[RMDB]
RNA sequence: GGGAACGACUCGAGUAGAGUCGAAAACUAAUUAUGCAACUGCUAAUUCUCUUCCUCUGUAGCACAUCUAAAUUCCUAUUUGUCUCUCAAGGCCCAGUUCGCAUAACCUUUCUUUACCCUCCCAGUCUAUGCUCCAAAUGAAGAGAGAGAACCAUAAAUCACGUAGCAGUUUCGACUGCUACGUGAUAAAAGAAACAACAACAACAAC
Reactivity to DMS in 0.01 (KOAc 150mM, MgCl2 10mM, bicine 150mM(pH8.5), 24C), signal-to-noise 1, nucleotides 027 to 156: c080u000a090a130u000u000a130u010g000c030a130a130c060u020g030c010u000a080a120u010u000c040u010c020u010u010c000c060u000c030u000g090u000a090g000c040a070c040a040u010c070u000a040a050a160u020u000c020c020u000a080u000u000u000g000u000c000u000c030u000c020a240a060g020g030c020c010c020a050g030u000u010c000g030c070a190u010a050a020c020c000u010u000u010c060u000u010u000a060c090c110c010u010c010c000c010a160g020u020c100u010a070u000g000c010u000c030c020a030a060a060u000g010a020a050g000a100g030a050g020a100g000a040a070c000c020a020u000a010a150
Reactivity to 2A3 in 0.01 (KOAc 150mM, MgCl2 10mM, bicine 150mM(pH8.5), 24C), signal-to-noise 1, nucleotides 027 to 156: c050u040a100a100u130u070a040u120g020c030a050a040c050u100g020c020u090a020a130u090u000c020u020c000u100u000c010c020u010c030u010g070u100a030g050c030a060c000a040u060c080u140a030a100a110u060u040c010c000u010a060u140u130u090g050u020c040u000c020u000c090a000a070g020g000c030c000c000a010g030u060u050c040g000c050a020u030a040a010c010c020u020u180u020c020u090u160u200a080c010c010c000u000c000c010c010a020g040u000c010u100a110u150g030c000u000c050c020a000a000a040u030g020a050a020g010a000g020a010g010a000g000a050a020c000c000a030u030a080a180
The record gives the reactivity of an RNA of 207 nucleotides to DMS and 2A3. Source: RMDB library OK3TST, as collected in RNAgym. Reactivities are given for positions 27 through 156. The 2A3 profile rests on 647 reads. For 2A3 the reverse transcriptase was SuperScript II with manganese.